This 177-nucleotide RNA was probed chemically with 2A3 and DMS. High 2A3 reactivity points to a flexible backbone, as in loops and unpaired stretches. The data come from the RNA Mapping Database (RMDB), libraries RFM100 and RFMREP. The reactions ran in a buffer of 150 mM KOAc, 10 mM MgCl2 and 150 mM bicine (pH 8.5), at 24 C. Values cover nucleotides 27 to 126.
RNA sequence: GGGAACGACUCGAGUAGAGUCGAAAAAAACGGACGGUACUAAAUACCGUCACUUUUACGUCUAACUUAUCGUUAACUCUGCAAAAAGAAAACAAGAAAAAGAAAAUCAGUGAAUAGGAGUAUAUAUCAAUAGAUUGGUGUUCGCACCAAUCUAUUGAAAAGAAACAACAACAACAAC
Reactivity to 2A3 in 0.01 (KOAc 150mM, MgCl2 10mM, bicine 150mM(pH8.5), 24C), signal-to-noise 3, nucleotides 027 to 126: a000a000a000c040g020g000a000c000g000g000u010a040c090u260a070a060a120u100a030c000c000g000u010c000a010c000u030u070u020u030a060c070g060u010c050u060a080a060c020u070u040a020u120c020g040u030u050a090a050c020u030c050u110g070c060a030a010a030a030a030g090a030a070a030a020c080a060a020g110a140a080a000a000a000g150a010a030a030a060u060c060a060g020u030g060a040a020u080a170g000g080a030g070u000a040u010a010u020a000u160
Reactivity to DMS in 0.01 (KOAc 150mM, MgCl2 10mM, bicine 150mM(pH8.5), 24C), signal-to-noise 2, nucleotides 027 to 126: a020a010a010c260g040g000a000c030g000g000u020a040c060u100a080a130a300u000a010c010c010g000u000c000a010c000u000u010u000u030a100c100g020u000c080u000a010a040c080u010u010a040u000c070g000u010u010a060a030c000u000c010u000g010c110a040a030a030a080a060g020a140a040a060a100c120a070a020g070a040a090a030a040a040g000a090a010a070a020u020c080a030g030u020g000a100a070u020a050g000g020a130g000u010a080u000a040u000a010u030